[RMDB]
RNA sequence: GGGAACGACUCGAGUAGAGUCGAAAAUCAUAGCGGUCACUGGCAUCAUCAGACAAUCACUGAACACUCGUUAGGUAUCGAUGAGGUUCACGGUCAGUUAGGAGCGAAGGAUGCAUACGCCGCGCGCGGCGGGUGGCGCUCAUAUCGUCAGGCGGCGCCUUACGACCACAUUCGUGUGGUCGUAAGGAAAAGAAACAACAACAACAAC
Reactivity to 2A3 in 0.01 (KOAc 150mM, MgCl2 10mM, bicine 150mM(pH8.5), 24C), signal-to-noise 2, nucleotides 027 to 156: u170c050a040u100a050g030c030g030g020u020c010a020c070u060g050g020c040a000u000c010a030u030c000a100g060a110c020a000a080u090c030a030c160u010g010a020a000c160a060c080u020c000g050u070u100a080g070g160u200a100u250c120g030a020u020g000a010g010g000u030u020c040a030c030g040g000u000c040a060g010u010u140a070g010g090a050g030c020g030a050a020g080g000a010u030g020c020a020u050a120c030g000c020c000g020c020g000c020g020c030g020g020c000g060g070g000u010g010g000c010g030c010u010c060a120u110a040u150c030g060u020c000a040g000g080c030g000g020c010g030
Reactivity to DMS in 0.01 (KOAc 150mM, MgCl2 10mM, bicine 150mM(pH8.5), 24C), signal-to-noise 1, nucleotides 027 to 156: u010c070a120u010a070g000c040g000g000u030c040a120c050u030g030g020c100a030u000c000a090u000c000a120g020a070c070a260a150u000c040a040c030u010g020a010a050c010a160c040u000c000g060u000u000a090g010g000u000a050u020c050g030a010u000g010a050g000g050u010u000c010a000c050g000g000u040c040a080g020u000u000a210g000g010a120g030c000g000a090a080g000g030a140u000g010c040a170u000a150c040g020c040c040g000c090g010c180g060c080g020g000c060g070g020g000u000g010g040c030g000c060u010c080a000u000a040u000c020g030u000c030a080g010g040c090g030g010c050g050

Source: RMDB library OK3TST, as collected in RNAgym. This 207-nucleotide RNA was probed chemically with 2A3 and DMS. 2A3 adducts were read by reverse transcription with SuperScript II with manganese. The DMS profile rests on 1,845 reads. DMS (dimethyl sulfate) methylates the pairing face of unpaired adenines and cytosines. The reactions ran in a buffer of 150 mM KOAc, 10 mM MgCl2 and 150 mM bicine (pH 8.5), at 24 C.